Structure probing data (DMS and 2A3) for a 207-nucleotide construct. The DMS profile rests on 1,766 reads.
[RMDB]
RNA sequence: GGGAACGACUCGAGUAGAGUCGAAAAGUACGUAGAGUGUCGGCAAGCUCUAUAUAUGGACACUUACGAAGGGUUUUGGUUGUUUUGUAUCUCAAGCCGACUUUGAGUAUUUGAGCAAAAUACGACAUGAAUCCUGUGACGUUCGCGUCACAGGAAAUACACCUUACGGGUUCGCCCGUAAGGUGUAAAAAGAAACAACAACAACAAC
Reactivity to DMS in 0.01 (KOAc 150mM, MgCl2 10mM, bicine 150mM(pH8.5), 24C), signal-to-noise 1, nucleotides 027 to 156: g030u010a030c040g050u000a010g020a100g020u010g010u010c020g020g030c050a090a300g000c000u010c010u010a100u000a040u000a020u000g000g000a180c040a060c040u000u020a160c130g000a100a180g010g010g000u000u000u000u040g030g010u000u000g000u020u000u020u000g020u010a070u000c080u000c030a080a040g050c020c030g010a070c070u000u000u010g000a250g030u000a120u000u010u000g040a150g050c100a060a020a010a020u010a050c000g020a130c040a070u010g010a150a110u000c000c000u010g060u000g000a030c000g040u000u010c300g000c040g000u010c010a010c000a000g000g010a000a000a040
Reactivity to 2A3 in 0.01 (KOAc 150mM, MgCl2 10mM, bicine 150mM(pH8.5), 24C), signal-to-noise 1, nucleotides 027 to 156: g060u050a000c020g000u000a000g020a060g100u070g030u070c050g000g060c160a240a100g010c020u010c030u040a070u040a030u020a020u220g050g050a070c060a020c140u130u210a070c160g130a130a110g010g020g040u070u020u040u220g040g000u030u030g000u030u030u000u010g020u010a090u020c060u030c030a040a010g020c010c020g030a040c010u070u040u110g020a030g020u010a010u020u020u040g040a040g030c040a000a030a000a050u060a030c040g010a000c040a040u170g100a070a090u000c000c000u000g000u000g000a000c030g010u000u120c190g000c010g100u020c010a000c000a000g000g010a000a000a000
The 2A3 profile rests on 603 reads. 2A3 adducts were read by reverse transcription with SuperScript II with manganese.